[RMDB]
RNA sequence: GGGAACGACUCGAGUAGAGUCGAAAAUUUAAGAUUAGAUGAUGAGUAAGAGAACAAAAGUAAGUAUUUUAUCACACCUACCUGACUAGAAUUCAGGAUAAGUAAGUUCUUCAUAAGAGAACAUUUCGUAUUAAGAUGUCUUCGGACAUCUUAAUACAAAAGAAACAACAACAACAAC
Reactivity to DMS in 0.01 (KOAc 150mM, MgCl2 10mM, bicine 150mM(pH8.5), 24C), signal-to-noise 3, nucleotides 027 to 126: u020u020u000a080a120g020a150u020u000a040g000a050u000g000a080u000g020a080g020u010a060a040g020a050g000a070a110c080a030a130a100a100g020u010a060a090g000u000a040u000u010u000u000a050u010c050a040c060a020c020c030u000a070c000c020u000g010a020c140u000a100g010a050a150u000u000c020a000g000g010a210u000a060a100g010u010a030a140g010u000u000c020u000u010c030a070u030a110a280g000a010g010a020a000c000a070u000u000u010c090
Reactivity to 2A3 in 0.01 (KOAc 150mM, MgCl2 10mM, bicine 150mM(pH8.5), 24C), signal-to-noise 2, nucleotides 027 to 126: u020u030u020a080a020g060a080u020u150a030g040a070u040g030a050u010g010a000g060u010a050a020g010a010g020a100a040c090a080a160a120a040g120u090a080a000g000u020a150u020u060u020u020a010u040c020a010c010a030c070c000u030a040c000c000u010g010a010c010u040a100g010a120a030u060u000c000a000g030g000a030u050a090a010g150u050a110a030g000u030u000c010u000u040c020a070u080a170a040g010a000g000a080a010c000a010u040u080u100c040
Background
The data come from the RNA Mapping Database (RMDB), library RFMREP. Chemical mapping of a 177-nucleotide RNA with DMS and 2A3. In probing experiments dimethyl sulfate is read out at A N1 and C N3, which are open when not base-paired. The 2A3 profile rests on 1,818 reads. The reactions ran in a buffer of 150 mM KOAc, 10 mM MgCl2 and 150 mM bicine (pH 8.5), at 24 C.